RNA sequence: GGGAACGACUCGAGUAGAGUCGAAAAGAUGUCAUUUGGUAAGGCUAUAUCAGGUGGCACUACAGGGACUAUGUCGCAUCAUGGUUCUUGUGAACUCGUAGCUUGAUGCGACAAGUUAUGAGUGAUCUAUUUUACUAUAGCCUUAGUGAGAUAGAGAUAAUAGUUUUAGGUUCGCCUAAAACUAUUAAAAAGAAACAACAACAACAAC
Reactivity to 2A3 in 0.01 (KOAc 150mM, MgCl2 10mM, bicine 150mM(pH8.5), 24C), signal-to-noise 8, nucleotides 027 to 156: g100a050u030g010u020c010a020u010u020u050g020g000u020a010a010g020g010c010u030a010u000a000u060c020a010g030g000u010g000g010c010a010c030u170a070c050a080g130g050g050a010c040u100a120u270g010u020c030g000c030a020u020c000a010u080g100g000u100u020c010u130u230g120u110g060a050a040c010u010c120g080u080a030g050c030u000u030g000a010u030g020c010g010a010c000a000a000g000u010u050a120u120g050a040g070u070g050a040u000c010u010a010u010u020u010u030a020c020u010a000u020a030g000c010c000u000u000a010g000u000g010a030g010a020u020a020g020a010g000a020
Reactivity to DMS in 0.01 (KOAc 150mM, MgCl2 10mM, bicine 150mM(pH8.5), 24C), signal-to-noise 5, nucleotides 027 to 156: g010a080u000g010u000c010a030u000u000u000g010g020u000a020a040g010g000c040u000a050u000a030u000c020a030g010g020u000g010g000c010a040c030u000a110c050a090g020g020g010a070c040u000a070u000g010u000c050g020c070a090u010c050a090u000g000g010u000u000c010u010u000g010u010g010a080a060c020u000c070g040u000a060g020c060u000u000g000a080u000g020c150g000a080c020a010a030g000u000u000a030u000g000a100g010u000g010a140u000c000u000a010u000u000u000u000a050c020u000a030u000a050g010c040c030u000u000a020g010u000g010a030g010a030u000a030g000a060g000a220